Chemical mapping of a 207-nucleotide RNA with 2A3. It was measured as part of the RMDB library RNAMAK.
RNA sequence: GGGAACGACUCGAGUAGAGUCGAAAAGGGGUCUGAGACAUGAGACGUGCACAUUCUUGGAUUUAUACUGAAGCCUCCACGGUAUUGUCAGAAUGGGGCGUCUCAACAGCUCAGACGGAGGCACCCAAAUCGCCCAAAAGUUCGCUUUUGGGCGAAACUUUCUCUCAUCGUUCGCGAUGAGAGAAAGAAAAGAAACAACAACAACAAC
Reactivity to 2A3 in 0.01 (KOAc 150mM, MgCl2 10mM, bicine 150mM(pH8.5), 24C), signal-to-noise 2, nucleotides 027 to 156: g120g010g070g010u020c000u010g010a010g000a040c060a190u210g010a030g000a010c000g010u120g100c100a020c010a240u030u000c030u080u200g090g000a070u170u300u050a000u140a030c020u000g030a120a070g050c040c040u020c030c010a020c000g000g000u020a000u020u030g040u010c040a040g000a000a000u020g000g000g030g000c000g000u030c010u000c000a010a010c040a000g010c010u000c000a000g000a000c040g000g000a060g020g000c030a070c080c000c020a010a150a070u040c000g010c000c000c000a000a000a000a000g030u060u140c300g120c070u000u000u000u040g000g000g000c000g000a000a000a000